[RMDB]
RNA sequence: GGGAACGACUCGAGUAGAGUCGAAAAGAUAUGGAUCCACCUACCCACCCUAUUUGCUCGGAAACGAGCAUUUAGGAGGGUGGAGUCCUAAGUCAAACGUUUCAACAGGUUCGCCUGUUGAAACGAAGAUAUUCCAAUACUUCGGUAUUGGAAUAUCAAAAGAAACAACAACAACAAC
Reactivity to 2A3 in 0.01 (KOAc 150mM, MgCl2 10mM, bicine 150mM(pH8.5), 24C), signal-to-noise 3, nucleotides 027 to 126: g110a050u230a170u300g010g000a000u020c010c010a010c010c010u300a300c050c010c040a060c020c000c000u010a010u000u020u010g000c000u000c000g020g000a070a110a070c010g020a000g000c000a000u000u000u000a000g000g000a010g000g000g000u000g000g010a020g030u000c000c000u090a100a010g210u190c170a220a080a100c040g000u000u010u000c000a000a000c010a020g000g070u080u110c280g100c090c010u000g000u000u000g000a000a000a000c000g000a010a010
Reactivity to DMS in 0.01 (KOAc 150mM, MgCl2 10mM, bicine 150mM(pH8.5), 24C), signal-to-noise 6, nucleotides 027 to 126: g000a110u000a140u000g000g020a280u000c000c000a000c000c010u000a150c020c050c030a300c090c000c000u000a000u000u000u000g010c010u000c000g000g000a090a070a220c000g000a010g000c000a000u000u000u000a010g000g000a050g000g000g010u000g010g000a050g010u000c000c000u000a050a160g000u000c110a100a110a260c010g010u000u000u000c000a000a010c000a000g000g000u000u010c240g000c000c010u000g010u000u000g010a010a000a010c000g020a030a070
Source: RMDB library TTRDEL, as collected in RNAgym. An RNA of 177 nucleotides, treated with 2A3 and DMS and read out base by base. High 2A3 reactivity points to a flexible backbone, as in loops and unpaired stretches. For 2A3, 10,203 sequencing reads were counted. Reactivities are given for positions 27 through 126.